[RMDB]
RNA sequence: GGGAACGACUCGAGUAGAGUCGAAAAUGUCAGGCCUGAUCGGAAACAGCAGCAGGUGAGUCCGCCUUAUGUGAAGGAUCGGCUGAAACACGAGGAAAUACUGAGCCAACGCAAGACGGUAGCCGAAAAAAUCUAGUUCACUUCGGUGAACUAGAAAGAACUCCAAGUUCUUCGGAACUUGGAGUUCAAAAGAAACAACAACAACAAC
Reactivity to 2A3 in 0.01 (KOAc 150mM, MgCl2 10mM, bicine 150mM(pH8.5), 24C), signal-to-noise 1, nucleotides 027 to 156: u090g000u000c010a000g060g060c000c060u180g010a050u090c040g090g060a050a090a120c040a030g080c010a010g000c020a010g010g000u030g030a100g100u100c050c080g000c010c030u100u100a090u170g020u030g060a060a030g080g000a030u040c020g010g000c000u010g050a040a040a000c070a000c050g010a080g040g140a120a100a130u200a090c010u090g040a020g050c010c010a030a040c030g000c030a040a040g030a050c070g060g050u010a010g000c000c020g050a140a000a000a000a000a000u000c000u000a000g000u010u000c000a000c000u000u080c240g030g010u000g000a000a000c000u000a000g000a000a030a000